[RMDB]
RNA sequence: GGGAACGACUCGAGUAGAGUCGAAAAAAAGAUAUGGACGAUGGAACUACUUUAUUAUAGCUUCAACAGCUAAGCUCGGAAACGAGCUUAGACAUGAAGAAUGUAGAAGCCAUCGUCCUAAGUCAAACGAGGUAAAAAGGUUCGCCUUUUUACCUCGAAAAGAAACAACAACAACAAC
Reactivity to 2A3 in 0.01 (KOAc 150mM, MgCl2 10mM, bicine 150mM(pH8.5), 24C), signal-to-noise 1, nucleotides 027 to 126: a000a020a110g080a040u100a060u130g010g000a040c010g030a000u000g000g100a190a190c010u050a030c010u260u170u100a220u300u170a290u240a260g060c000u030u000c010a070a030c020a110g060c020u000a010a000g000c020u000c000g000g080a000a110a060c040g000a000g020c000u000u000a010g040a000c000a090u080g000a000a030g000a050a000u180g000u020a010g030a200a040g140c020c000a000u010c000g000u020c000c010u030a000a000g010u010c010a000a080a040
Reactivity to DMS in 0.01 (KOAc 150mM, MgCl2 10mM, bicine 150mM(pH8.5), 24C), signal-to-noise 2, nucleotides 027 to 126: a060a120a130g010a060u020a300u000g010g010a000c000g000a020u000g010g000a190a150c000u000a020c020u000u010u010a180u000u000a130u010a190g000c030u010u000c000a060a110c290a190g000c040u000a000a010g000c000u000c000g010g000a070a090a170c010g010a000g000c000u000u000a000g010a020c080a180u000g000a010a030g030a060a100u020g010u000a000g010a140a110g010c040c020a000u010c000g000u010c000c000u000a000a060g030u000c020a020a050a190

Source information:
Chemical mapping of a 177-nucleotide RNA with 2A3 and DMS. The reactions ran in a buffer of 150 mM KOAc, 10 mM MgCl2 and 150 mM bicine (pH 8.5), at 24 C. For DMS, 1,123 sequencing reads were counted.